[RMDB]
Structure probing data (DMS and 2A3) for a 177-nucleotide construct.
For 2A3 the reverse transcriptase was SuperScript II with manganese.
2A3 is a SHAPE reagent: it acylates the 2'-hydroxyl of flexible nucleotides of all four kinds.
It was measured as part of the RMDB libraries RFM100 and RFMREP.
RNA sequence: GGGAACGACUCGAGUAGAGUCGAAAAACUGGAGAGUAAUCUGUUGCUCUUACGGUGUUUAUAGCGCGCCAUUUGACGGAUGGUUUAUACUUGGCCCGGUAUUGUCGCCCCGGGCGUUGGCGUCACCUUUGUCAUCCUUUUUCGAAAGGAUGACAAAAAAAGAAACAACAACAACAAC
Reactivity to DMS in 0.01 (KOAc 150mM, MgCl2 10mM, bicine 150mM(pH8.5), 24C), signal-to-noise 5, nucleotides 027 to 126: a020c010u000g000g000a000g000a030g020u000a040a060u020c200u040g000u010u010g010c010u000c000u000u010a090c040g010g000u000g000u010u000u020a100u020a140g010c150g010c130g010c000c000a030u000u000u020g010a050c050g020g000a040u010g010g000u000u010u020a070u010a080c100u010u020g010g000c000c000c000g010g010u030a050u010u010g010u010c080g020c110c160c000c000g000g010g010c030g010u010u000g000g010c040g020u000c050a050c100c070
Reactivity to 2A3 in 0.01 (KOAc 150mM, MgCl2 10mM, bicine 150mM(pH8.5), 24C), signal-to-noise 5, nucleotides 027 to 126: a010c030u040g020g000a000g000a000g030u030a020a090u140c050u100g180u120u030g010c020u020c020u010u040a150c020g030g010u030g010u010u300u050a160u080a070g070c070g000c000g010c030c010a040u070u060u110g090a030c040g020g030a040u040g050g080u020u170u180a140u070a060c070u060u140g080g000c010c000c040g000g010u070a120u060u200g100u110c090g040c020c010c020c000g020g000g000c000g030u020u030g000g000c000g000u020c040a070c000c020